RNA sequence: GGGAACGACUCGAGUAGAGUCGAAAAAUCCGCUCGUCGGUGACAAGUUUAGCCCCGUUAAAAGACAGACUGCCGAAUAAGCUGGAGUCCGUAUAGCUAUCGCCCAGCGACAGAAUACUGUUAACAGGAGCGAGUAGCUAUUCGUAGCUACUCGCUCAAAAGAAACAACAACAACAAC
Reactivity to DMS in 0.01 (KOAc 150mM, MgCl2 10mM, bicine 150mM(pH8.5), 24C), signal-to-noise 2, nucleotides 027 to 126: a110u000c000c000g000c010u000c170g000u000c080g010g000u020g080a010c100a010a080g040u040u000u010a190g030c030c000c010c080g010u070u030a150a100a150a130g000a060c070a070g030a060c040u040g000c070c050g000a040a150u030a170a050g010c010u040g000g000a090g000u000c110c010g100u000a000u070a070g000c060u000a000u000c040g000c070c090c010a070g020c220g020a070c070a070g000a040a220u020a200c040u010g020u000u010a130a050c170a110g050
Reactivity to 2A3 in 0.01 (KOAc 150mM, MgCl2 10mM, bicine 150mM(pH8.5), 24C), signal-to-noise 2, nucleotides 027 to 126: a050u100c030c050g000c030u060c000g130u020c030g050g000u060g050a040c040a030a170g020u040u140u250a000g100c000c000c000c000g060u040u100a080a190a000a100g000a020c060a020g050a030c020u060g030c000c060g050a090a120u270a300a100g000c030u010g100g000a060g000u000c000c000g010u150a170u130a080g030c000u090a110u170c030g000c000c020c000a080g020c030g020a020c010a000g020a000a050u180a300c000u020g080u090u080a230a000c020a080g020

Annotation:
Structure probing data (DMS and 2A3) for a 177-nucleotide construct. 2A3 adducts were read by reverse transcription with SuperScript II with manganese. For 2A3, 664 sequencing reads were counted. For DMS the reverse transcriptase was MarathonRT. The DMS profile rests on 1,271 reads. The reactions ran in a buffer of 150 mM KOAc, 10 mM MgCl2 and 150 mM bicine (pH 8.5), at 24 C.